An RNA of 177 nucleotides, treated with DMS and 2A3 and read out base by base.
The 2A3 profile rests on 824 reads.
The reactions ran in a buffer of 150 mM KOAc, 10 mM MgCl2 and 150 mM bicine (pH 8.5), at 24 C.
Values cover nucleotides 27 to 126.
The data come from the RNA Mapping Database (RMDB), library OK2TST.
For DMS, 991 sequencing reads were counted.
[RMDB]
RNA sequence: GGGAACGACUCGAGUAGAGUCGAAAACAGCCAGUAAUAUUAAUAACGUACUGAUGGCCUCUUUGGUUUCGCUGAGGUUGUACAGCGUCAUGACUCGGAACAACGUUAUCUCUUUUGCUUGCGGAAAGUGACCACUAUGGUUCGCCAUAGUGGUCACAAAAGAAACAACAACAACAAC
Reactivity to DMS in 0.01 (KOAc 150mM, MgCl2 10mM, bicine 150mM(pH8.5), 24C), signal-to-noise 1, nucleotides 027 to 126: c090a190g030c100c060a090g000u020a070a030u000a170u000u000a060a020u020a040a030c130g000u000a080c070u000g000a210u000g010g050c050c010u020c050u010u000u000g000g000u010u010u000c000g010c060u000g000a050g000g010u000u000g000u000a110c010a040g000c160g020u000c160a030u010g000a120c080u000c100g000g000a100a130c100a120a120c000g010u000u000a100u000c060u040c010u000u000u000u000g000c000u000u010g020c030g000g000a090a060a090
Reactivity to 2A3 in 0.01 (KOAc 150mM, MgCl2 10mM, bicine 150mM(pH8.5), 24C), signal-to-noise 1, nucleotides 027 to 126: c000a010g040c000c010a000g000u020a000a080u000a050u300u060a090a070u070a050a000c060g020u060a070c020u070g050a110u120g000g040c010c030u080c040u100u030u090g140g040u140u020u020c000g060c010u050g000a020g080g000u000u110g010u060a070c000a050g000c010g030u010c050a080u070g060a160c020u000c090g010g070a080a030c020a020a010c060g000u000u020a100u000c150u040c000u030u000u040u050g070c060u020u060g070c040g100g020a080a090a100